The data come from the RNA Mapping Database (RMDB), library M2PK50. This 177-nucleotide RNA was probed chemically with 2A3 and DMS. As a SHAPE reagent, 2A3 marks flexible, mostly unpaired nucleotides at the ribose 2'-OH. The reactions ran in a buffer of 150 mM KOAc, 10 mM MgCl2 and 150 mM bicine (pH 8.5), at 24 C. For 2A3, 2,707 sequencing reads were counted.

RNA sequence: GGGAACGACUCGAGUAGAGUCGAAAAUAGUCGGAAUUCGUUCCGACUAGAUGAACGCUGCAAGCGCCAGCGCGCUCAAAAGAGCACGCAAAAGCAACGCAAAAAUGAACUUAUUCGUAAGUUCAAAGUUACUAACCGUGUUCGCACGGUUAGUAACAAAAGAAACAACAACAACAAC
Reactivity to 2A3 in 0.01 (KOAc 150mM, MgCl2 10mM, bicine 150mM(pH8.5), 24C), signal-to-noise 2, nucleotides 027 to 126: u010a000g010u010c000g000g020a010a010u050u010c140g030u070u000c000c000g000a000c000u000a000g010a020u160g050a090a020c050g000c090u050g000c040a090a140g040c040g060c060c020a010g000c000g000c000g050c000u000c000a260a300a080a150g020a010g010c020a010c020g040c000a000a000a020a140g020c010a030a000c090g000c050a080a070a070a010a020u040g000a010a000c000u000u020a010u060u080c220g080u050a000a000g000u010u010c000a100a030a000
Reactivity to DMS in 0.01 (KOAc 150mM, MgCl2 10mM, bicine 150mM(pH8.5), 24C), signal-to-noise 2, nucleotides 027 to 126: u000a010g000u000c000g020g000a030a010u020u040c220g030u000u000c000c000g000a010c000u000a010g000a130u010g000a090a120c060g030c040u000g000c060a190a170g010c040g050c090c060a150g010c010g010c030g000c020u000c040a120a060a060a190g010a000g010c020a010c000g030c030a010a020a110a110g010c040a020a060c060g020c160a030a050a040a070a150u000g010a010a020c000u000u000a000u020u000c200g050u010a000a010g000u000u000c000a040a050a140
Values cover nucleotides 27 to 126.